[RMDB]
RNA sequence: GGGAACGACUCGAGUAGAGUCGAAAAUGGAGAUGGAUGCUGGAUCCUGGAAAACAGGUUUAACGGGUAGGGGGUGGUGCCCCUACCGACGCAUCACUCCAGAUACCAAAACCGAGCUUCGGCUCGGCAUGAGGCAUAGGUUCGCCUAUGCCUCAUGAAAAGAAACAACAACAACAAC
Reactivity to 2A3 in 0.01 (KOAc 150mM, MgCl2 10mM, bicine 150mM(pH8.5), 24C), signal-to-noise 3, nucleotides 027 to 126: u020g010g010a010g010a050u120g260g000a010u030g020c050u100g050g050a030u060c010c010u000g010g030a090a180a060a090c000a000g020g000u040u050u060a080a030c060g050g000g010u010a000g000g010g010g010g010u080g030g030u070g040c000c010c000c000u000a000c000c000g010a000c020g000c000a000u010c010a000c010u000c000c000a000g000a020u110a030c010c000a010a060a010a070c000c000g000a010g010c000u060u160c210g110g000c010u010c000g000g020
Reactivity to DMS in 0.01 (KOAc 150mM, MgCl2 10mM, bicine 150mM(pH8.5), 24C), signal-to-noise 3, nucleotides 027 to 126: u000g020g040a030g020a100u010g000g020a020u020g020c010u000g040g010a030u000c020c010u020g000g020a110a090a140a180c020a020g000g000u000u000u000a100a100c250g000g000g030u000a010g000g000g010g000g000u010g030g020u000g000c000c000c010c000u010a000c020c010g020a020c120g000c010a010u000c000a130c020u000c020c010a020g000a110u000a180c000c010a080a040a080a240c010c000g000a000g020c000u000u020c170g040g000c000u000c000g040g000
Record summary:
Structure probing data (2A3 and DMS) for a 177-nucleotide construct. Source: RMDB library RFMREP, as collected in RNAgym. Reactivities are given for positions 27 through 126. Reactivities are rounded to 0.1 and cut off at 0 and 3.